[RMDB]
RNA sequence: GGGAACGACUCGAGUAGAGUCGAAAACAAUGAAGACUAAACCAGCGCACAUUAUAGAUCGAGAGUUGAAAGAUUACAUCGAUUCAACUGGUUUAACAGCAUUAAUACCACCACUGAAUAUCAAUCCAGCUGUACAUGACCCCGAAACAACAUAUUCAAAGUAUUAUCGCUUCGGCGAUAAUACUUUAAAAGAAACAACAACAACAAC
Reactivity to DMS in 0.01 (KOAc 150mM, MgCl2 10mM, bicine 150mM(pH8.5), 24C), signal-to-noise 1, nucleotides 027 to 156: c020a080a080u010g010a080a160g040a280c100u000a010a000a070c010c020a070g010c110g030c060a120c110a090u030u000a180u000a190g000a040u000c000g040a070g010a120g020u000u000g000a210a110a090g000a130u000u010a000c000a180u000c010g010a060u020u000c030a050a050c020u000g020g010u000u000u000a030a080c030a230g020c010a190u000u000a050a160u000a090c090c010a100c070c020a050c060u010g000a030a030u000a120u000c110a050a080u020c040c050a030g030c040u000g050u000a080c090a150u000g020a100c030c030c030c000g000a110a030a150c090a050a060c080a060u000a160u040u000c010
Reactivity to 2A3 in 0.01 (KOAc 150mM, MgCl2 10mM, bicine 150mM(pH8.5), 24C), signal-to-noise 2, nucleotides 027 to 156: c070a000a130u040g000a050a050g020a030c000u030a000a010a000c010c000a000g000c050g100c080a070c010a070u140u160a140u270a170g020a010u000c000g000a000g000a020g050u000u020g010a040a040a060g150a040u180u150a030c010a010u000c000g030a020u020u050c040a060a020c010u010g000g000u000u000u000a020a020c010a010g130c000a010u020u110a170a080u090a130c040c070a000c030c010a030c010u030g020a040a030u060a030u110c000a050a020u030c050c020a020g010c020u070g020u000a020c000a090u100g060a070c040c000c000c010g080a010a020a060c080a020a000c030a080u170a050u100u160c000
This 207-nucleotide RNA was probed chemically with DMS and 2A3. The RNA was probed in 150 mM KOAc, 10 mM MgCl2 and 150 mM bicine (pH 8.5) at 24 C.